Annotation: An RNA of 207 nucleotides, treated with 2A3 and read out base by base. The data come from the RNA Mapping Database (RMDB), library OK3TST. The RNA was probed in 150 mM KOAc, 10 mM MgCl2 and 150 mM bicine (pH 8.5) at 24 C.
[RMDB]
RNA sequence: GGGAACGACUCGAGUAGAGUCGAAAAUCGCCCUAGACAAAGCAAUAAGGAAAAAGAGAAAAUGCCUUAACCUUUUUACUCAUACCUUUUCUUUACAGCAUGGCUUUUGUUACAGCUCUAAUUAUUGCCAACAUUGUCACUGUCGCUCACGGGCAAAGACUUGGGCUUAUUUCGAUAAGCCCAAGUCAAAAGAAACAACAACAACAAC
Reactivity to 2A3 in 0.01 (KOAc 150mM, MgCl2 10mM, bicine 150mM(pH8.5), 24C), signal-to-noise 2, nucleotides 027 to 156: u080c040g020c000c000c000u050a060g010a040c080a010a070a040g030c050a030a130u060a130a030g000g020a090a080a040a060a020g030a000g040a050a030a030a000u050g120c050c040u160u130a130a060c040c000u110u000u000u060u200a200c020u070c040a070u200a220c020c010u020u010u040u030c020u040u090u030a050c020a020g050c050a070u010g040g000c000u050u060u090u070g060u040u040a100c030a050g030c040u040c020u120a070a200u200u120a080u120u110g000c010c020a040a010c020a080u000u050g000u010c000a020c090u060g020u150c080g010c060u070c040a030c110g010g040g020c000a020a000a090